The record gives the reactivity of an RNA of 177 nucleotides to 2A3 and DMS. DMS adducts were read by reverse transcription with MarathonRT. Conditions: 150 mM KOAc, 10 mM MgCl2 and 150 mM bicine (pH 8.5), 24 C.

RNA sequence: GGGAACGACUCGAGUAGAGUCGAAAAGAAAGAAAGAAAGAGAAUGAAGUGAUGAUUGAACUUUGUUUCCCUAUUGGUUUGAUCGCCGAUAUGAUGGCAUACGUAUUAGCUCUAUCUGAUCAUUCAAUUAGACCGUUAGGUUCGCCUAACGGUCUAAAAAAGAAACAACAACAACAAC
Reactivity to 2A3 in 0.01 (KOAc 150mM, MgCl2 10mM, bicine 150mM(pH8.5), 24C), signal-to-noise 3, nucleotides 027 to 126: g080a010a040a000g150a120a060a010g060a020a080a000g120a000g020a000a110u120g100a200a000g060u110g100a080u020g040a020u090u090g020a010a000c030u070u100u090g050u000u020u000c000c000c000u000a040u030u230g080g020u030u010u060g030a000u020c000g030c110c010g010a000u000a060u240g160a120u140g000g000c080a010u040a150c040g010u050a120u030u130a210g000c040u040c000u020a010u000c000u060g040a070u040c010a010u080u040c050a000a060
Reactivity to DMS in 0.01 (KOAc 150mM, MgCl2 10mM, bicine 150mM(pH8.5), 24C), signal-to-noise 4, nucleotides 027 to 126: g010a070a040a040g000a070a080a090g000a060a130a060g000a110g000a070a040u000g020a060a180g000u040g010a060u030g010a030u000u000g000a040a030c040u000u000u010g010u010u000u020c000c000c010u020a080u000u020g010g010u000u000u000g010a070u000c080g000c030c020g010a060u000a050u030g000a110u030g000g000c100a070u020a060c100g000u020a090u010u000a100g000c030u000c040u000a030u000c030u010g000a090u000c030a060u020u000c030a060a150

The 2A3 profile rests on 1,251 reads. Source: RMDB libraries RFM100 and RFMREP, as collected in RNAgym.